[RMDB]
RNA sequence: GGGAACGACUCGAGUAGAGUCGAAAAAAGUUGAUAUGGAUUUACUCCGAGCAGACGAACUACCACGAACAGGGGAAACUCUACCCGUGGCGUCUCCGUUUGACGAGUAAGUCCUAAGUCAACAAAAGUACAUAGUUAUCUUCGGAUAACUAUGUACAAAAGAAACAACAACAACAAC
Reactivity to DMS in 0.01 (KOAc 150mM, MgCl2 10mM, bicine 150mM(pH8.5), 24C), signal-to-noise 4, nucleotides 027 to 126: a080a070g000u000u000g010a020u000a180u000g000g000a010u000u000u000a020c000u000c010c030g000a100g040c220a000g010a000c010g000a060a030c050u020a300c010c000a000c000g000a050a170c100a160g010g000g010g000a030a010a040c000u000c000u000a140c300c250c000g010u000g000g000c140g000u000c020u000c180c020g020u000u020u010g010a220c300g000a040g010u000a000a010g000u000c000c000u000a000a060g000u000c010a000a010c010a050a100a040a080
Reactivity to 2A3 in 0.01 (KOAc 150mM, MgCl2 10mM, bicine 150mM(pH8.5), 24C), signal-to-noise 2, nucleotides 027 to 126: a000a000g000u010u000g000a010u000a000u030g000g000a000u010u010u010a000c000u000c010c000g010a020g010c000a000g040a000c000g000a030a000c060u170a080c130c000a000c010g020a040a010c020a070g000g000g000g000a010a000a000c000u010c000u010a010c010c000c010g010u000g010g000c000g010u000c010u060c030c010g040u160u230u120g010a010c000g000a000g000u000a000a000g000u010c000c000u000a000a000g000u000c000a000a010c000a000a050a000a000